An RNA of 177 nucleotides, treated with DMS and 2A3 and read out base by base. For DMS the reverse transcriptase was MarathonRT.

RNA sequence: GGGAACGACUCGAGUAGAGUCGAAAAUAAGAAGGCCAAGUCUGAUGAAGCAAGCCUUGGCUGAUACACUCCUCCUAGAAAAAAAGGGUUGGAGAGAGCAGCCCUUCAUGGAGAAGGUCCCAGGGGCUGUCGCCAUAGAGUUCGCUCUAUGGCGACAAAAAGAAACAACAACAACAAC
Reactivity to DMS in 0.01 (KOAc 150mM, MgCl2 10mM, bicine 150mM(pH8.5), 24C), signal-to-noise 1, nucleotides 027 to 126: u020a060a180g000a120a260g000g010c010c010a000a000g030u020c000u000g080a150u030g000a160a160g010c270a080a020g000c040c020u000u000g000g000c000u000g000a030u000a150c080a160c030u010c080c000u010c000c000u000a060g030a000a000a000a120a180a050a070g000g000g020u010u000g010g000a040g010a050g010a030g000c010a010g000c000c000c000u010u010c120a210u000g010g000a010g000a140a060g000g010u000c000c000c070a120g020g000g030g000c100
Reactivity to 2A3 in 0.01 (KOAc 150mM, MgCl2 10mM, bicine 150mM(pH8.5), 24C), signal-to-noise 3, nucleotides 027 to 126: u220a020a010g170a040a020g000g000c000c000a000a010g000u000c020u030g090a130u160g110a210a080g100c110a020a000g000c050c000u000u000g000g000c020u020g010a000u020a030c030a010c010u020c010c000u030c020c010u080a100g260a050a050a020a000a000a010a020g010g000g000u050u020g100g020a100g030a000g030a010g180c000a000g000c000c000c040u010u050c090a150u130g020g000a030g000a030a080g040g030u000c000c010c000a020g010g010g060g010c080
The RNA was probed in 150 mM KOAc, 10 mM MgCl2 and 150 mM bicine (pH 8.5) at 24 C.
It was measured as part of the RMDB library RFM100.